[RMDB]
RNA sequence: GGGAACGACUCGAGUAGAGUCGAAAAGGGGUCUCGCUGGAGGACGUCCCCCACUUCGCUUGGAUUUAUGGGACUGAAGCCUCCACGGUCCCAUUGUCAGCGAAGUACGUCCGAUGAAAGCGAGACGGAGGCACCCAAACGCUGAUUCGUCAGCGAAGUAUUAGAUUACUUUCGAGUAAUCUAAUACAAAAGAAACAACAACAACAAC
Reactivity to 2A3 in 0.01 (KOAc 150mM, MgCl2 10mM, bicine 150mM(pH8.5), 24C), signal-to-noise 4, nucleotides 027 to 156: g100g010g010g000u000c000u000c010g010c000u020g020g050a030g010g000a010c010g100u150c090c040c010c060c020a030c010u000u000c000g020c030u080u240g180g020a060u150u180u040a030u080g010g000g010a000c010u000g020a080a010g010c000c010u000c020c000a010c010g000g000u000c010c000c000a000u010u040g040u060c040a000g000c000g010a000a000g000u010a010c020g000u000c000c010g050a120u050g040a040a020a000g000c000g000a000g000a000c000g000g000a000g000g010c010a040c010c010c010a050a070a000c020g000c010u000g000a030u040u050c170g090u010c080a000g000c010g010a060a020
Reactivity to DMS in 0.01 (KOAc 150mM, MgCl2 10mM, bicine 150mM(pH8.5), 24C), signal-to-noise 2, nucleotides 027 to 156: g000g010g020g000u000c010u000c010g020c000u000g030g010a090g010g020a080c010g000u010c070c090c040c030c110a150c020u000u000c010g000c010u000u000g030g000a090u020u000u000a020u000g010g000g000a040c010u010g000a050a150g000c030c000u010c010c000a160c040g020g010u010c000c010c000a010u000u000g010u000c030a050g000c000g010a050a040g030u000a020c030g020u000c000c000g010a140u000g000a190a200a070g030c020g020a080g010a010c000g000g030a040g090g080c020a170c020c020c020a050a110a140c010g030c000u010g000a090u010u020c290g010u000c000a000g010c000g000a040a210